[RMDB]
RNA sequence: GGGAACGACUCGAGUAGAGUCGAAAAGAUAUGGACCGAACAUACCAGCGAAGAACUAACUCGGAAACGAGUUAGGGAGCUGAAUGUCGGUCCUAAGUCAAAACCGUAAAAGUUCGCUUUUACGGAACAUGGGGACGUAGUUCGCUACGUCCCCAUGAAAAGAAACAACAACAACAAC
Reactivity to DMS in 0.01 (KOAc 150mM, MgCl2 10mM, bicine 150mM(pH8.5), 24C), signal-to-noise 2, nucleotides 027 to 126: g000a050u000a300u020g010g020a000c000c000g000a030a030c050a050u000a140c300c040a000g010c010g050a120a090g000a040a200c000u000a010a000c000u000c000g000g000a060a150a220c010g000a010g000u000u000a000g000g000g050a020g060c000u000g000a050a030u010g010u000c000g010g020u000c000c000u000a010a110g000u020c070a140a070a140a120c000c010g000u010a000a000a000a010g020u000u000c300g000c000u000u000u000u000a010c000g000g010a060a110
Reactivity to 2A3 in 0.01 (KOAc 150mM, MgCl2 10mM, bicine 150mM(pH8.5), 24C), signal-to-noise 2, nucleotides 027 to 126: g000a020u030a070u090g000g000a010c020c030g030a180a050c020a050u240a260c280c050a020g000c040g260a300a090g020a010a000c010u000a000a000c000u000c000g020g050a100a070a030c000g000a000g010u000u010a000g000g000g020a000g000c020u010g100a070a030u120g040u020c000g000g030u000c000c000u000a010a000g000u030c010a000a050a160a200c000c010g000u000a010a010a010a000g060u140u230c300g170c090u000u020u030u000a000c000g000g020a020a010